[RMDB]
RNA sequence: GGGAACGACUCGAGUAGAGUCGAAAAUACAAUGAAUAGCUGUACAGGUACCAGGAGAAGCGGGUGCAGGAAGGAGGAUCAGCGCACAGAGAGGUGUGGCCACUGUGGGUACGUGUACAGAGAGAAAAUCUCUCAGAAGGUUCGCCUUCUGAGAGAUAAAAGAAACAACAACAACAAC
Reactivity to 2A3 in 0.01 (KOAc 150mM, MgCl2 10mM, bicine 150mM(pH8.5), 24C), signal-to-noise 1, nucleotides 027 to 126: u090a000c040a010a110u170g130a160a110u140a200g040c020u000g000u010a000c000a040g000g060u000a000c000c020a040g000g130a120g000a130a000g040c050g020g040g030u110g030c030a010g030g130a040a060g010g050a050g030g030a090u120c050a010g050c010g010c040a000c000a090g130a000g030a020g040g110u030g010u030g060g000c060c030a050c030u060g040u090g110g000g000u040a030c050g120u000g000u010a010c000a000g020a000g000a000g010a020a050a010
Reactivity to DMS in 0.01 (KOAc 150mM, MgCl2 10mM, bicine 150mM(pH8.5), 24C), signal-to-noise 2, nucleotides 027 to 126: u020a120c200a120a160u010g000a090a140u020a140g020c000u000g000u000a020c020a030g010g010u000a010c000c020a190g000g000a100g010a020a120g030c090g000g000g030u000g000c080a080g000g000a060a130g010g000a050g000g000a150u000c030a100g000c060g010c080a090c060a050g020a110g000a050g000g000u000g030u020g030g000c080c070a040c040u010g010u010g010g000g010u000a000c000g010u000g000u000a000c030a010g000a060g000a110g000a050a130a050